This 207-nucleotide RNA was probed chemically with 2A3 and DMS. Values cover nucleotides 27 to 156. High DMS reactivity at an A or C suggests that its Watson-Crick edge is free. It was measured as part of the RMDB library OK3TST.
RNA sequence: GGGAACGACUCGAGUAGAGUCGAAAAUAACUGCAUCCGCUUAAGCCCCUGGCUCUGUUAGCAGACAAGGAUUAUGUGAUGUGCUCAGAAGCCCAGCCAUCUAUUGGUAUUUAAUGCAUUCACUGUCAGUAAAGAUUCCCUGGUGCAGGAGGCUGAAUACUUUUACUCCAUUCGUGGAGUAAAAGUAAAAAGAAACAACAACAACAAC
Reactivity to 2A3 in 0.01 (KOAc 150mM, MgCl2 10mM, bicine 150mM(pH8.5), 24C), signal-to-noise 4, nucleotides 027 to 156: u050a040a030c020u030g020c000a030u050c050c050g010c070u100u120a030a050g030c010c010c000c020u030g030g000c020u000c010u010g070u100u170a050g040c040a010g040a050c060a080a070g060g010a070u090u070a040u230g040u020g010a060u030g050u030g010c000u010c070a070g010a190a020g030c000c010c010a010g010c010c030a060u050c050u140a140u070u070g010g000u030a100u040u210u050a070a060u100g010c020a020u030u110c040a040c060u020g030u100c020a010g020u090a090a060a030g030a060u030u040c020c000c000u020g000g020u020g020c010a000g000g010a030g040g000c000u030g020a060a050
Reactivity to DMS in 0.01 (KOAc 150mM, MgCl2 10mM, bicine 150mM(pH8.5), 24C), signal-to-noise 3, nucleotides 027 to 156: u000a080a100c040u000g000c020a060u000c040c020g000c030u000u000a070a110g010c040c100c050c020u010g010g000c020u000c020u020g020u000u010a120g030c050a050g020a100c070a080a080g000g000a150u000u000a050u000g010u000g020a040u010g020u000g020c040u000c020a120g010a130a150g000c040c020c020a140g010c020c010a030u000c080u000a160u000u000g000g020u000a050u010u000u000a050a070u000g000c030a180u000u000c030a050c000u000g020u000c030a050g010u000a040a040a080g010a160u000u000c010c000c010u010g020g020u000g010c020a030g020g000a090g010g010c040u000g020a070a190